[RMDB]
RNA sequence: GGGAACGACUCGAGUAGAGUCGAAAAGAAGGGGUCUGAGUGGAAUAGAAACGAAAGAAGAAGACGAGAGGAAGGCUGGACGGAAACGGACGGAACCAUACGGCAAGUGAGAUGCCAGUGUGUGUCCAAAACACAUUGCUUUCGAGCAAUGUGUUUUAAAAGAAACAACAACAACAAC
Reactivity to DMS in 0.01 (KOAc 150mM, MgCl2 10mM, bicine 150mM(pH8.5), 24C), signal-to-noise 3, nucleotides 027 to 126: g010a110a050g030g010g010g010u000c050u010g000a130g010u010g000g020a110a100u010a070g020a080a060a100c150g010a090a080a100g010a060a080g020a060a070g000a050c080g000a090g010a050g010g000a040a050g010g010c060u000g010g000a080c060g000g000a020a050a080c100g020g020a070c090g000g000a090a100c060c010a020u010a030c050g000g000c010a030a070g020u020g010a110g010a090u000g000c000c010a090g040u000g020u000g010u010g000u000c020c040
Reactivity to 2A3 in 0.01 (KOAc 150mM, MgCl2 10mM, bicine 150mM(pH8.5), 24C), signal-to-noise 1, nucleotides 027 to 126: g050a060a000g070g000g050g000u020c050u020g100a030g060u070g000g070a080a110u110a240g110a070a070a010c060g040a020a050a050g040a040a010g030a020a000g010a040c010g000a000g000a020g090g020a100a000g030g000c030u030g040g030a020c060g020g000a080a000a000c020g000g070a030c040g000g020a050a000c030c000a000u000a050c010g000g020c000a010a010g140u080g210a140g010a110u030g000c120c170a260g010u010g000u010g000u030g070u010c040c000

The data come from the RNA Mapping Database (RMDB), library OK2TRN. Chemical mapping of a 177-nucleotide RNA with DMS and 2A3. The reactions ran in a buffer of 150 mM KOAc, 10 mM MgCl2 and 150 mM bicine (pH 8.5), at 24 C. 2A3 adducts were read by reverse transcription with SuperScript II with manganese.